[RMDB]
RNA sequence: GGGAACGACUCGAGUAGAGUCGAAAAGAUAUCUUCGGAUAUCAAUCAUCCUAAGUCAGUCGGGAGUACGUACUAUUCGAAGAACAAUCGGAAACGAUUGGGAGAAUUCUACGUACGAGGAUCGACUGAUAUGGACUAGUAGCUUGUUCGCAAGCAACUCAGUUGGGCAAUUCGUUGCCCAACUGAGAAAAGAAACAACAACAACAAC
Reactivity to 2A3 in 0.01 (KOAc 150mM, MgCl2 10mM, bicine 150mM(pH8.5), 24C), signal-to-noise 1, nucleotides 027 to 156: g000a000u000a000u000c010u070u190c290g110g010a010u000a000u010c010a000a030u130c040a060u000c020c000u080a170a030g030u000c000a000g000u000c000g000g040g000a010g010u020a000c020g000u000a020c000u000a010u030u010c040g240a300a030g010a040a030c000a000a000u000c050g030g000a000a150a000c000g000a000u000u000g000g000g010a100g000a020a000u030u020c050u010a000c000g010u000a000c000g000a060g000g010a020u000c000g000a000c000u000g000a000u010a030u060g000g000a010c050u130a050g180u070a010g000c020u040u030g030u150u050c250g020c120a010a010g030c010a010a130
Structure probing data (2A3) for a 207-nucleotide construct.